Notes
An RNA of 177 nucleotides, treated with 2A3 and DMS and read out base by base. 2A3 adducts were read by reverse transcription with SuperScript II with manganese. For 2A3, 4,569 sequencing reads were counted. The reactions ran in a buffer of 150 mM KOAc, 10 mM MgCl2 and 150 mM bicine (pH 8.5), at 24 C. 2A3 is a SHAPE reagent: it acylates the 2'-hydroxyl of flexible nucleotides of all four kinds.
[RMDB]
RNA sequence: GGGAACGACUCGAGUAGAGUCGAAAAGAUAUGGACCACGGUACAAGCUGAUGACCAUCUUCGGAAACGAAGAUGCAAGGCUGUAUUGGUCCUAAGUCAAAGCAUGCCCCGUUCGCGGGGCAUGCAACCAUUGAAAUCACUUCGGUGAUUUCAAUGGAAAAGAAACAACAACAACAAC
Reactivity to 2A3 in 0.01 (KOAc 150mM, MgCl2 10mM, bicine 150mM(pH8.5), 24C), signal-to-noise 2, nucleotides 027 to 126: g010a020u020a030u140g000g000a000c010c040a090c270g140g030u080a060c110a170a230g000c030u020g020a300u080g040a200c000c010a000u010c000u000u020c010g000g000a040a040a030c030g000a010a000g010a020u010g000c010a040a150g010g010c020u040g020u050a050u010u130g020g010u000c000c010u010a120a010g020u030c050a110a100a100g000c000a010u000g020c000c000c060c010g000u050u030c260g040c040g130g000g000g000c000a010u010g000c010a000a000
Reactivity to DMS in 0.01 (KOAc 150mM, MgCl2 10mM, bicine 150mM(pH8.5), 24C), signal-to-noise 3, nucleotides 027 to 126: g030a000u000a170u010g000g000a010c000c000a130c300g020g030u000a010c020a110a060g020c000u000g000a080u020g000a300c300c010a000u000c000u000u000c000g010g000a030a020a060c000g010a010a000g000a010u000g000c000a030a060g020g030c010u000g000u000a020u000u000g000g010u010c000c000u000a000a050g020u000c010a070a060a190g000c010a020u010g010c000c000c010c000g010u000u010c250g030c020g000g000g000g040c000a000u000g030c020a040a050